The data come from the RNA Mapping Database (RMDB), libraries RFM100 and RFMREP. Chemical mapping of a 177-nucleotide RNA with 2A3 and DMS. The reactions ran in a buffer of 150 mM KOAc, 10 mM MgCl2 and 150 mM bicine (pH 8.5), at 24 C. For DMS the reverse transcriptase was MarathonRT.
RNA sequence: GGGAACGACUCGAGUAGAGUCGAAAAGCAGGGGCCGGAACUCGACCGCCUGGCCGCGCAUCUCUCCGAGUUGCGCAAGGACGCCGCGCGGCGCUGAGCCGGGGUACCCUCGACACCAAGCCGCCGCUAAUGUCGUAGUAUUCGUACUACGACAUUAAAAAGAAACAACAACAACAAC
Reactivity to 2A3 in 0.01 (KOAc 150mM, MgCl2 10mM, bicine 150mM(pH8.5), 24C), signal-to-noise 9, nucleotides 027 to 126: g100c100a010g030g000g020g090c010c000g030g020a090a080c010u030c030g100a160c050c000g010c010c010u030g020g000c000c020g000c000g000c000a020u010c000u000c020u030c080c220g010a000g010u010u020g000c010g000c010a030a050g140g020a060c080g000c010c010g020c010g000c000g030g000c040g020c130u110g000a010g010c000c000g000g000g000g040u130a100c000c010c000u010c000g020a030c020a010c020c010a010a030g050c020c020g040c010c010g010c060
Reactivity to DMS in 0.01 (KOAc 150mM, MgCl2 10mM, bicine 150mM(pH8.5), 24C), signal-to-noise 9, nucleotides 027 to 126: g020c120a030g010g000g010g010c010c000g000g000a020a050c030u000c010g010a160c010c010g010c010c010u000g010g020c020c220g000c000g010c010a010u000c010u000c010u040c170c180g000a020g010u000u000g010c000g010c000a120a070g020g010a120c200g010c000c010g020c300g000c010g000g000c010g010c090u000g000a040g000c010c000g010g000g000g010u020a090c020c010c000u000c020g010a110c110a160c030c030a110a100g010c030c020g000c030c030g000c090